[RMDB]
RNA sequence: GGGAACGACUCGAGUAGAGUCGAAAACGAGGAUCUCAUCGGCGAUAGAACAUUACAGGAUCUCAUAUUUGUAAUGUGAUAAGAUGGUAGUAUGAGAUCCUAAUACCAUCUUAUCGAUCGUGGUCAGGCUACUCGUAGAUUUCGAUCUGUGAGUAGCAAAAGAAACAACAACAACAAC
Reactivity to 2A3 in 0.01 (KOAc 150mM, MgCl2 10mM, bicine 150mM(pH8.5), 24C), signal-to-noise 9, nucleotides 027 to 126: c020g020a040g010g020a020u000c010u000c010a030u020c010g130g010c060g060a030u060a120g150a040a020c000a010u010u030a010c010a010g060g030a090u020c050u030c110a070u100a060u100u060u020g020u010a020a010u030g040u030g010a000u000a000a000g000a000u000g000g010u020a030g010u020a020u020g010a010g000a010u000c000c000u000a000a000u010a000c000c000a000u000c000u000u000a000u000c010g010a020u030c030g020u030g030g060u040c040a030g070
Reactivity to DMS in 0.01 (KOAc 150mM, MgCl2 10mM, bicine 150mM(pH8.5), 24C), signal-to-noise 9, nucleotides 027 to 126: c050g010a090g000g000a020u000c010u000c010a040u000c070g010g010c160g010a110u040a100g010a090a060c020a030u000u010a030c040a030g010g000a050u020c190u040c200a080u040a070u020u020u010g010u010a020a020u010g010u000g000a010u000a000a010g000a010u000g000g010u000a020g010u010a020u000g000a030g010a030u000c000c010u010a010a060u010a010c000c000a000u000c000u000u000a000u000c000g020a080u030c100g010u000g000g000u000c060a110g000